Structure probing data (DMS) for a 177-nucleotide construct. Reactivities are given for positions 27 through 126.
RNA sequence: GGGAACGACUCGAGUAGAGUCGAAAAAAUCAGGGAAGAAAAGGUAGUGGAGACAUGGUGGACUCACAGGUUCCCAUGAUAGAUGAGCCGUUAGAGGCGCCGUCUGUUAGCUGUGAGGAGCUUAUGGUGAUCCCAGGGGAUUCGUCCCCUGGGAUCAAAAAGAAACAACAACAACAAC
Reactivity to DMS in 0.01 (KOAc 150mM, MgCl2 10mM, bicine 150mM(pH8.5), 24C), signal-to-noise 2, nucleotides 027 to 126: a030a030u000c060a040g000g020g000a070a110g010a010a010a060a080g000g010u000a030g050u020g010g000a060g000a120c050a020u000g000g020u000g000g010a300c000u020c000a010c060a030g010g030u000u000c000c010c010a070u030g010a000u000a020g000a010u000g010a300g000c000c000g000u050u040a120g030a180g030g000c000g000c140c000g020u020c000u000g000u010u000a010g010c010u060g000u020g010a030g000g000a230g010c030u000u020a030u000g010g050